[RMDB]
RNA sequence: GGGAACGACUCGAGUAGAGUCGAAAAGAAACUUACGCUCUAGCCGCUUAAUCCCGGCUGGACGCUGCACCGGAAGGCCUCUCGGCCGGGCGGGUAACCGCAGCAGCGUCAUUUAGAGAGGAUCGUGUUGUAUUGGGUUACUUAAUACAACAUUAAACGUUUCAUUUAACUUCGGUUAAAUGAAACGAAAAGAAACAACAACAACAAC
Reactivity to 2A3 in 0.01 (KOAc 150mM, MgCl2 10mM, bicine 150mM(pH8.5), 24C), signal-to-noise 2, nucleotides 027 to 156: g020a000a110a000c120u130u080a040c080g050c030u010c010u010a000g000c000c000g000c050u120u120a040a030u140c000c020c000g000g000c000u020g020g000a000c010g000c000u000g030c000a000c000c000g020g010a040a010g050g020c010c000u010c020u000c020g010g000c000c000g010g000g000c010g010g000g010u070a090a050c000c000g000c020a020g000c010a000g000c000g070u080c060a050u110u210u230a040g000a000g000a000g000g010a040u070c040g020u000g000u010u000g010u000a020u020u010g060g000g100u100u110a110c040u030u080a010a000u000a000c000a000a000c000a020u010u110a070a050a010
Reactivity to DMS in 0.01 (KOAc 150mM, MgCl2 10mM, bicine 150mM(pH8.5), 24C), signal-to-noise 2, nucleotides 027 to 156: g000a140a070a050c090u000u000a070c040g000c040u010c010u000a090g010c000c000g030c030u000u000a140a290u000c130c060c000g000g090c010u000g000g000a030c010g000c000u000g000c020a300c040c020g020g020a190a110g010g020c000c000u000c110u020c150g020g030c020c040g000g010g020c070g030g000g010u000a070a150c030c010g010c040a250g010c000a020g000c010g000u010c030a080u000u000u040a060g000a120g000a070g030g000a090u000c090g040u020g030u000u010g010u000a010u000u000g010g000g010u000u000a060c050u000u000a010a030u000a020c000a000a010c020a020u000u000a070a090a170